[RMDB]
RNA sequence: GGGAACGACUCGAGUAGAGUCGAAAAGGUGAUUGUGAUACUCGCUACUGUCAAUCAUCGAUUGACAGUAUUAGACUGCUACAAUCACAUUACGUGACUCAAUUAUUUAGCAGUCUAAUUGAUAACAUAACGCGAGAUAUGUUAAAGUCACGUAUCGGCGGUAAAUUUAGUUCGCUAAAUUUACCGCAAAAGAAACAACAACAACAAC
Reactivity to 2A3 in 0.01 (KOAc 150mM, MgCl2 10mM, bicine 150mM(pH8.5), 24C), signal-to-noise 4, nucleotides 027 to 156: g100g010u000g000a000u000u010g000u000g000a010u020a030c000u010c000g000c010u010a010c000u010g000u000c000a000a010u020c110a130u210c270g010a010u000u000g000a000c000a000g000u000a000u000u000a000g000a000c000u000g000c020u020a000c000a010a010u010c000a000c000a000u060u060a000c000g000u000g010a000c010u020c090a180a160u160u100a090u160u210u130a030g000c000a000g010u000c000u000a000a000u030u060g070a060u080a190a060c050a060u110a080a010c060g000c010g020a010g050a060u020a010u060g040u010u050a140a100a000g000u010c000a000c000g000u010a030u090c050g060
Reactivity to DMS in 0.01 (KOAc 150mM, MgCl2 10mM, bicine 150mM(pH8.5), 24C), signal-to-noise 1, nucleotides 027 to 156: g060g030u010g000a040u000u000g000u030g030a130u010a090c010u010c000g080c040u000a030c000u020g000u000c010a000a000u000c010a270u020c160g010a030u000u000g010a020c000a020g030u010a000u000u010a040g000a010c020u000g020c010u000a040c020a020a010u000c000a030c000a090u000u000a030c070g040u010g000a020c010u010c050a100a120u010u010a170u000u000u000a100g010c010a030g040u010c010u010a010a030u000u010g020a180u000a080a080c140a110u000a000a180c130g030c000g000a020g020a120u000a040u000g000u020u020a050a070a160g000u000c000a010c000g000u000a040u010c170g000